[RMDB]
RNA sequence: GGGAACGACUCGAGUAGAGUCGAAAAGAAACCUCCACGAAGAAAUUCGACCUGGAUCAGCUCACCCUCGGAGAAGUGGCAGCGAUCGAGGAUCUGUCCGGCGUCGCGAUCGGCAGCGUGUCCGAGACUUUAUGUGGACAUUCGUGUCCACAUAAAGAAAAGAAACAACAACAACAAC
Reactivity to DMS in 0.01 (KOAc 150mM, MgCl2 10mM, bicine 150mM(pH8.5), 24C), signal-to-noise 3, nucleotides 027 to 126: g010a120a120a180c040c010u000c040c030a090c030g000a060a080g000a130a070a150u000u000c020g010a080c040c050u000g000g000a030u010c040a040g020c280u000c120a090c060c010c010u000c040g010g010a120g000a090a080g020u010g020g000c140a060g000c110g000a060u000c010g000a050g020g000a060u000c040u000g000u000c020c010g010g010c110g000u000c030g010c120g000a060u000c050g030g020c130a060g000c090g030u000g010u000c030c000g000a110g000a150
Reactivity to 2A3 in 0.01 (KOAc 150mM, MgCl2 10mM, bicine 150mM(pH8.5), 24C), signal-to-noise 2, nucleotides 027 to 126: g030a080a090a020c020c020u040c030c020a050c030g110a050a130g030a030a140a080u120u040c040g000a040c000c000u030g020g020a070u100c050a000g050c000u050c020a070c040c020c010u020c030g160g010a180g030a270a060g050u060g090g000c090a010g020c040g050a050u080c010g020a020g000g010a040u040c020u050g050u030c020c020g030g000c050g040u020c020g020c020g080a090u010c000g040g020c040a030g020c020g020u020g010u000c020c010g030a030g050a050
This 177-nucleotide RNA was probed chemically with DMS and 2A3.
Reactivities are given for positions 27 through 126.
For DMS, 2,747 sequencing reads were counted.
For DMS the reverse transcriptase was MarathonRT.
Source: RMDB library OK2TRN, as collected in RNAgym.